[RMDB]
RNA sequence: GGGAACGACUCGAGUAGAGUCGAAAAAGUUGGGGGAGACCGAAGCGAGGAGGAAAGCAAAGAAAGCAACGGGGCUAGCGAGUGGAUGUUCCUCCCCCCGAAGGUCCCGAGUGAGGCUUAUCCCGGGUAACGCACGUCUUCGGACGUGCGAAAAGAAACAACAACAACAAC
Reactivity to 2A3 in 0.01 (KOAc 150mM, MgCl2 10mM, bicine 150mM(pH8.5), 24C), signal-to-noise 2, nucleotides 027 to 129: a000g090u100u220g080g000g000g040g000a060g050a060c050c000g010a020a030g020c010g000a070g040g040a060g010g000a050a000a050g000c000a000a000a060g000a030a100a000g050c020a020a060c060g000g070g000g000c050u020a010g000c000g020a000g000u130g060g000a090u120g100u080u090c060c000u010c010c010c020c000c000c000g010a150a000g030g000u050c020c000c000g030a010g030u190g000a040g050g030c000u010u010a100u070c000c010c010g080g000g000u000a080a000
Reactivity to DMS in 0.01 (KOAc 150mM, MgCl2 10mM, bicine 150mM(pH8.5), 24C), signal-to-noise 5, nucleotides 027 to 129: a020g050u010u070g060g000g000g050g030a150g010a110c050c050g020a130a040g060c140g040a030g040g010a080g020g060a030a040a090g060c170a000a000a000g010a000a010a000g020c130a120a170c130g000g020g050g070c040u030a060g000c030g030a040g020u010g040g000a060u090g030u030u000c040c040u000c080c000c000c050c030c000g020a090a090g010g060u010c000c000c000g020a090g040u020g010a130g030g030c070u010u080a150u060c000c000c020g030g000g040u020a100a040

Source: RMDB library 15KLIB, as collected in RNAgym. An RNA of 170 nucleotides, treated with 2A3 and DMS and read out base by base. DMS adducts were read by reverse transcription with MarathonRT. The 2A3 profile rests on 2,989 reads. 2A3 adducts were read by reverse transcription with SuperScript II with manganese. The reactions ran in a buffer of 150 mM KOAc, 10 mM MgCl2 and 150 mM bicine (pH 8.5), at 24 C. For DMS, 8,035 sequencing reads were counted.